[RMDB]
RNA sequence: GGGAACGACUCGAGUAGAGUCGAAAAACGGAUGGUACCCCAUCCGACCAUUGGGUAGAAGCGUUCAAUCAGCACCGUGACGGUGCAGAUGGGAAAUUGCCCAUGAUACGCACCAUACGUGGUGCGAAAAAGCCAUCGGUGUUCGCACCGAUGGCAACUACCAGCAGACCUUCGGGUCUGCUGGUAGAAAAGAAACAACAACAACAAC
Reactivity to 2A3 in 0.01 (KOAc 150mM, MgCl2 10mM, bicine 150mM(pH8.5), 24C), signal-to-noise 1, nucleotides 027 to 156: a000c050g000g010a040u060g000g070u290a140c120c080c000c000a000u010c000c000g000a010c000c000a190u000u010g020g000g020u040a060g070a150a030g120c010g050u030u070c050a110a040u010c020a010g020c000a000c000c000g160u190g300a190c160g040g000u010g000c000a000g000a000u040g000g000g050a000a160a000u020u010g010c000c000c000a000u040g040a010u100a040c010g000c000a010c000c010a010u080a130c170g090u120g000g020u000g010c030g020a050a030a000a000a000g040c050c000a000u000c070g000g030u010g010u070u130c190g050c100a010c000c000g050a000u000g000g000c000a000a000
An RNA of 207 nucleotides, treated with 2A3 and read out base by base. Reactivities are rounded to 0.1 and cut off at 0 and 3. For 2A3 the reverse transcriptase was SuperScript II with manganese.